[RMDB]
RNA sequence: GGGAACGACUCGAGUAGAGUCGAAAACGUCGGGCACGUCGACACGCUCGAUCUUCAAGUCAUUGAUGACGACUCGCGGACCGACCUGCAAAAACGCGGGGUUGAGAAUAGCGACGAACUCCGCGAGCACCUAAAGAGGCUUCGGCCUCUUUAGGUGAAAAGAAACAACAACAACAAC
Reactivity to DMS in 0.01 (KOAc 150mM, MgCl2 10mM, bicine 150mM(pH8.5), 24C), signal-to-noise 2, nucleotides 027 to 126: c140g010u000c000g020g000g000c040a090c150g010u000c040g050a090c240a130c120g000c120u010c040g000a090u000c080u000u000c040a130a050g000u000c180a040u000u000g010a060u010g020a070c040g000a180c080u000c020g010c010g010g000a120c180c030g000a100c020c010u000g020c050a030a050a040a050a070c150g010c000g030g000g020g000u000u000g000a150g030a120a070u010a130g030c090g000a040c080g010a130a030c080u000c000c000g000c020g010a090g010
Reactivity to 2A3 in 0.01 (KOAc 150mM, MgCl2 10mM, bicine 150mM(pH8.5), 24C), signal-to-noise 3, nucleotides 027 to 126: c050g030u030c040g030g120g000c140a020c100g100u120c050g100a060c070a020c190g000c030u010c030g180a300u010c010u070u050c030a130a090g090u080c050a180u060u260g070a070u090g030a060c000g050a060c000u000c030g010c000g020g030a030c030c000g020a010c010c000u040g000c040a090a060a100a070a130c040g000c010g020g000g000g010u030u010g080a140g050a150a210u180a090g100c050g060a050c030g020a040a040c000u000c030c000g020c030g020a010g020